The record gives the reactivity of an RNA of 207 nucleotides to 2A3. Conditions: 150 mM KOAc, 10 mM MgCl2 and 150 mM bicine (pH 8.5), 24 C.
[RMDB]
RNA sequence: GGGAACGACUCGAGUAGAGUCGAAAACUGGAUCCGAAGCCUCUAGAAGGAUAAUAUAGGCACUCCAUACCCUACUCCGACUCAAUACGUCCCCGUCGUACAGAAUGGUAACAUACCUCUCCAAAUAAAAACGUUGUCUCGUUCGCGAGACAACGAAGUUGCAUUGUAGCUUCGGCUACAAUGCAACAAAAGAAACAACAACAACAAC
Reactivity to 2A3 in 0.01 (KOAc 150mM, MgCl2 10mM, bicine 150mM(pH8.5), 24C), signal-to-noise 1, nucleotides 027 to 156: c010u000g020g070a000u000c020c000g060a170a010g040c010c030u140c120u170a160g060a190a040g110g040a050u150a220a100u200a160u150a160g010g030c070a020c040u000c020c000a080u080a070c000c010c000u060a060c080u050c000c030g040a040c000u000c080a000a090u060a130c030g040u000c000c000c000c020g020u030c010g020u050a080c000a080g040a080a040u000g050g000u110a140a000c010a050u130a040c020c000u090c000u070c060c000a020a070a220u120a080a080a030a000a030c010g000u010u000g020u000c000u000c000g000u030u020c030g030c020g150a000g000a000c000a010a000c010g000a000a020